[RMDB]
An RNA of 207 nucleotides, treated with 2A3 and read out base by base. It was measured as part of the RMDB library OK3TST. For 2A3 the reverse transcriptase was SuperScript II with manganese.
RNA sequence: GGGAACGACUCGAGUAGAGUCGAAAACAUCCGCAGCGCUUCUGUCUGGAUAAUCUUCCACACGCGCAGCCACCAAAAAAUUAAGUGAUAUAAGGGAUGCUCGGAUGCCUUCUCCUGAAUCCCUACCACCUGUGGUACUGGUUAAAGCGGACCAAGCGCUUCCUCAUAUCUUCGGAUAUGAGGAAGCAAAAGAAACAACAACAACAAC
Reactivity to 2A3 in 0.01 (KOAc 150mM, MgCl2 10mM, bicine 150mM(pH8.5), 24C), signal-to-noise 2, nucleotides 027 to 156: c010a020u000c020c000g000c050a020g000c020g030c070u130u150c040u150g110u070c060u040g000g030a060u070a140a270u190c140u020u070c010c000a030c000a000c070g030c000g000c020a030g010c020c020a010c030c000a000a000a020a100a020a150u120u270a180a070g000u050g040a040u060a090u070a300a110g020g000g000a040u030g030c020u030c000g040g010a040u090g120c000c090u220u130c060u010c010c030u070g010a010a010u000c000c010c000u010a030c000c030a030c000c040u050g010u050g070g010u050a190c080u060g080g020u070u140a080a000a030g020c010g000g000a000c040c020a080a020g060c050